[RMDB]
RNA sequence: GGGAACGACUCGAGUAGAGUCGAAAAUUUAAGAGAAGGUAUUGAAGCUGGGAAUUAGGUUUCCGUGCAGAAGGUGGGCAUGACUCAUAAACCCAGGCUUGCACUGAAGUUGCCUAUCUUCCAUUAGUAGUGGAGAUAUAUUCGUAUAUCUCCACUAAAAAGAAACAACAACAACAAC
Reactivity to 2A3 in 0.01 (KOAc 150mM, MgCl2 10mM, bicine 150mM(pH8.5), 24C), signal-to-noise 6, nucleotides 027 to 126: u060u050u040a060a000g040a020g020a080a050g060g020u080a070u120u180g070a060a010g030c030u040g010g000g050a060a080u050u010a040g050g000u010u020u020c050c020g010u020g000c000a020g020a160a020g090g030u070g020g010g010c030a030u090g060a070c020u040c130a030u130a060a070a030c000c010c000a010g060g080c040u040u050g020c040a020c040u040g020a030a020g110u190u100g020c000c000u010a040u010c020u030u000c010c010a050u090u140a050g140
Reactivity to DMS in 0.01 (KOAc 150mM, MgCl2 10mM, bicine 150mM(pH8.5), 24C), signal-to-noise 9, nucleotides 027 to 126: u010u010u010a070a100g010a110g010a100a060g000g000u000a050u010u010g010a070a070g010c070u000g010g000g000a060a060u000u000a040g010g000u000u000u000c040c060g020u000g010c040a080g010a070a060g010g020u000g010g000g010c040a190u000g000a090c110u010c100a070u010a050a080a160c030c020c010a050g000g000c040u000u000g010c050a050c080u000g010a050a070g010u010u000g010c010c070u000a030u000c060u000u000c010c050a110u000u010a100g020

Chemical mapping of a 177-nucleotide RNA with 2A3 and DMS. For 2A3, 13,713 sequencing reads were counted. For DMS, 26,094 sequencing reads were counted. The data come from the RNA Mapping Database (RMDB), library OK2TRN. As a SHAPE reagent, 2A3 marks flexible, mostly unpaired nucleotides at the ribose 2'-OH.